[RMDB]
RNA sequence: GGGAACGACUCGAGUAGAGUCGAAAAAUUGAGCACAGCUAUGAUGCGCGGGUGGAAGCAGGGCACCAUCGUCGCGAGAAACGACAAGUUUGGGCCGUGUCCCUUCAACAGAUGGGUCCUCUGUACAGAGAACAGUCGUAUUCGUACGACUGUUCUCAAAAGAAACAACAACAACAAC
Reactivity to DMS in 0.01 (KOAc 150mM, MgCl2 10mM, bicine 150mM(pH8.5), 24C), signal-to-noise 2, nucleotides 027 to 126: a100u020u000g010a080g020c060a060c030a110g020c040u020a040u020g000a120u000g000c090g010c040g010g010g030u000g000g010a150a070g000c080a040g000g000g000c050a060c010c040a040u000c060g010u000c010g000c050g000a120g010a060a080a110c010g000a020c010a110a110g020u010u010u010g010g010g000c030c090g020u000g010u000c000c020c010u020u000c080a070a050c110a170g010a030u010g000g000g020u000c030c020u000c010u010g020u010a070c250a140
Reactivity to 2A3 in 0.01 (KOAc 150mM, MgCl2 10mM, bicine 150mM(pH8.5), 24C), signal-to-noise 2, nucleotides 027 to 126: a010u060u100g020a010g020c030a030c040a080g000c030u150a090u270g050a090u130g040c040g000c040g030g000g000u060g040g060a060a010g000c080a040g030g000g000c030a060c120c010a010u020c050g070u030c010g010c040g000a090g110a020a140a030c020g010a030c020a070a020g020u020u050u070g030g000g000c020c090g070u070g050u070c020c000c030u020u070c060a110a030c030a060g030a030u030g020g060g000u000c010c040u010c000u020g010u030a070c050a020